[RMDB]
RNA sequence: GGGAACGACUCGAGUAGAGUCGAAAAGACUAACAAUGUUGAGCAUCAUUUCAUGUGCUUGUGAGAAUGGGGUGAGAAAAGAAAGGAAAGCAGGAUCGGCUGAAUUCUUGAGAGAGGCAAGGCAGCAUAACCUCUUACAUUUCGAUGUAAGAGGUUAAAAAGAAACAACAACAACAAC
Reactivity to DMS in 0.01 (KOAc 150mM, MgCl2 10mM, bicine 150mM(pH8.5), 24C), signal-to-noise 9, nucleotides 027 to 126: g010a140c080u000a080a090c150a080a070u010g010u000u010g010a060g010c040a050u010c070a070u000u000u000c150a070u000g020u010g010c040u000u010g020u010g010a070g010a090a070u000g000g000g000g020u000g000a070g000a060a050a060a070g010a050a080a080g000g000a040a060a070g010c040a050g010g000a060u000c110g010g000c040u000g000a080a090u000u000c040u000u000g000a090g010a060g010a060g000g000c060a040a050g010g010c070a050g010c100a140
Reactivity to 2A3 in 0.01 (KOAc 150mM, MgCl2 10mM, bicine 150mM(pH8.5), 24C), signal-to-noise 4, nucleotides 027 to 126: g030a010c070u090a070a010c040a080a110u140g040u130u160g090a010g020c050a030u100c020a050u060u150u120c090a070u110g020u040g030c020u060u050g040u070g050a070g040a080a090u120g020g010g000g020u040g030a050g040a020a120a010a000g090a020a050a010g000g040a100a000a010g030c010a010g030g040a060u050c050g010g000c010u010g030a060a080u100u040c030u020u090g020a080g000a010g010a000g040g040c010a010a020g030g000c010a010g010c000a020